Source information: Chemical mapping of a 177-nucleotide RNA with DMS and 2A3. It was measured as part of the RMDB library OK1LIB. The RNA was probed in 150 mM KOAc, 10 mM MgCl2 and 150 mM bicine (pH 8.5) at 24 C. Values cover nucleotides 27 to 126.
[RMDB]
RNA sequence: GGGAACGACUCGAGUAGAGUCGAAAACGCCUGUCGGCUGUCGUGCAGCGUGAACUCGCCGACGAAGCAUACCACGGCGGGCACGGGCACAGCGUUAGCGACGCUCCCGGGACCGCGGCCAAGGGCGCCCUCUCGAUCGAUUCGUCGAUCGAGAGGGAAAAGAAACAACAACAACAAC
Reactivity to DMS in 0.01 (KOAc 150mM, MgCl2 10mM, bicine 150mM(pH8.5), 24C), signal-to-noise 1, nucleotides 027 to 126: c020g090c000c050u000g000u010c260g000g150c000u070g110u000c100g000u000g000c040a050g000c070g000u050g000a150a300c130u000c050g010c060c000g010a140c040g050a050a120g000c140a210u000a000c140c180a140c000g000g010c000g000g000g000c040a000c000g000g020g050c300a050c170a060g000c000g000u000u000a020g000c010g000a020c010g000c000u080c000c000c010g070g000g000a070c000c250g000c020g010g000c000c000a180a180g000g000g000c000g000
Reactivity to 2A3 in 0.01 (KOAc 150mM, MgCl2 10mM, bicine 150mM(pH8.5), 24C), signal-to-noise 3, nucleotides 027 to 126: c050g010c000c010u080g090u210c070g010g000c020u070g060u090c020g000u050g090c030a130g080c050g060u060g080a090a070c010u020c020g030c000c000g030a110c060g010a070a000g020c040a020u070a200c060c010a030c030g060g000c020g000g000g000c070a030c000g020g000g020c080a030c050a100g000c000g020u020u090a040g000c010g160a060c000g010c000u040c010c010c070g010g010g020a010c000c020g050c000g040g000c000c020a070a070g000g000g030c020g040